[RMDB]
RNA sequence: GGGAACGACUCGAGUAGAGUCGAAAAUUUCCUCCCAGGUGUAGAAUCAAUCUCCAUGUCCUCUCGCCUGGGCCUCUUCGCCGGGGGUCCUCCCUCUUCGUCCUUCUUCUUUCUCAACAUUCCGACGCCACUCGGCGGUUCGCCGCCGAGAAAAGAAACAACAACAACAAC
Reactivity to DMS in 0.01 (KOAc 150mM, MgCl2 10mM, bicine 150mM(pH8.5), 24C), signal-to-noise 4, nucleotides 027 to 129: u070u000u020c060c010u030c020c070c010a000g000g000u000g030u090a070g030a110a050u010c120a050a110u040c070u030c090c100a160u010g030u030c050c070u010c050u020c040g020c000c030u020g000g000g010c120c070u000c000u000u020c110g000c090c030g000g040g070g030g000u020c000c000u030c000c000c000u000c020u010u020c050g010u010c040c040u020u000c030u000u030c050u000u000u000c020u090c020a110a120c090a040u000u050c040c030g030a060c110g020c100c050a100
Reactivity to 2A3 in 0.01 (KOAc 150mM, MgCl2 10mM, bicine 150mM(pH8.5), 24C), signal-to-noise 5, nucleotides 027 to 129: u020u020u020c020c010u050c000c000c000a000g020g000u010g030u110a030g020a040a040u060c050a040a060u050c050u010c110c040a070u060g040u030c020c010u030c010u000c000g010c000c000u000g000g000g010c020c000u050c000u090u060c030g040c030c010g030g000g000g000g030u030c000c000u010c020c000c000u000c030u010u040c040g040u000c020c000u030u050c000u020u020c000u020u080u020c020u020c020a050a120c020a110u120u050c030c030g050a050c030g050c020c000a110
Overview:
Structure probing data (DMS and 2A3) for a 170-nucleotide construct. Values cover nucleotides 27 to 129. For DMS the reverse transcriptase was MarathonRT. It was measured as part of the RMDB library 15KLIB. The RNA was probed in 150 mM KOAc, 10 mM MgCl2 and 150 mM bicine (pH 8.5) at 24 C. The 2A3 profile rests on 12,195 reads.